[RMDB]
An RNA of 177 nucleotides, treated with DMS and 2A3 and read out base by base. Values cover nucleotides 27 to 126. The DMS profile rests on 1,672 reads. It was measured as part of the RMDB library RFM100.

RNA sequence: GGGAACGACUCGAGUAGAGUCGAAAAACGGAGGCUACGGCCUCCGAUGCCUCUUCAAUUCCGUAGUGCAUUGCAGUAGAUUUAAAAGAAAGAUUCUGCAAGCACCGCGGGAGUGAGGCGGCUUCAAAGCUACCGAACUAUUCGUAGUUCGGUAGCUAAAAGAAACAACAACAACAAC
Reactivity to DMS in 0.01 (KOAc 150mM, MgCl2 10mM, bicine 150mM(pH8.5), 24C), signal-to-noise 1, nucleotides 027 to 126: a060c010g040g010a000g000g030c040u010a100c240g000g050c000c000u000c000c000g000a000u000g000c000c020u030c000u030u010c000a000a020u080u000c000c000g170u000a090g000u000g020c020a090u000u000g000c000a000g000u000a090g000a200u010u020u000a110a100a120a190g000a040a100a010g040a300u010u000c000u000g000c010a000a020g000c000a010c000c060g040c000g000g000g000a000g000u000g000a030g000g020c080g000g030c070u020u000c100a050a080
Reactivity to 2A3 in 0.01 (KOAc 150mM, MgCl2 10mM, bicine 150mM(pH8.5), 24C), signal-to-noise 4, nucleotides 027 to 126: a000c000g000g000a000g010g000c010u050a040c250g080g000c000c000u000c000c000g010a000u020g010c000c000u000c000u020u010c000a020a080u000u010c010c020g010u010a000g000u000g010c150a300u000u000g000c000a010g030u100a060g040a300u030u080u140a170a260a090a060g250a070a090a000g090a070u100u030c000u000g000c000a000a010g000c000a000c000c000g000c000g000g000g000a000g010u010g000a000g000g000c040g000g000c000u110u090c110a150a150